[RMDB]
RNA sequence: GGGAACGACUCGAGUAGAGUCGAAAAGGAAGAGGGCGUGAGGGAUCCAGCCUACCGAUCUGGGCUCCGCCUUCCGGCCCGGAUCGGGAAGGUUCAGGAAGGCUGUGGGAAGCGACACCCUGCCCGUGGGGGGUCCUUCCCGAGACACGAAACACGGGGCUCAAAAUAUGUUCGCAUAUUUUGAGCCAAAAGAAACAACAACAACAAC
Reactivity to 2A3 in 0.01 (KOAc 150mM, MgCl2 10mM, bicine 150mM(pH8.5), 24C), signal-to-noise 2, nucleotides 027 to 156: g070g000a020a060g010a070g030g030g030c030g040u100g030a080g030g000g010a050u050c040c050a020g010c000c000u040a130c000c000g000a000u000c010u040g010g010g020c000u050c060c150g010c000c000u000u000c000c000g020g020c020c000c000g000g010a000u010c000g000g000g000a020a000g100g010u160u120c060a010g000g000a010a000g000g010c020u040g300u090g040g000g000a010a010g040c110g120a000c020a300c040c000c000u010g010c010c000c000g000u000g000g010g000g000g020g000u000c000c000u010u040c000c000c000g000a000g000a010c060a010c040g120a080a070a000c010a000c000g000g000
The record gives the reactivity of an RNA of 207 nucleotides to 2A3. It was measured as part of the RMDB library RSTRND. 2A3 is a SHAPE reagent: it acylates the 2'-hydroxyl of flexible nucleotides of all four kinds. For 2A3, 1,159 sequencing reads were counted.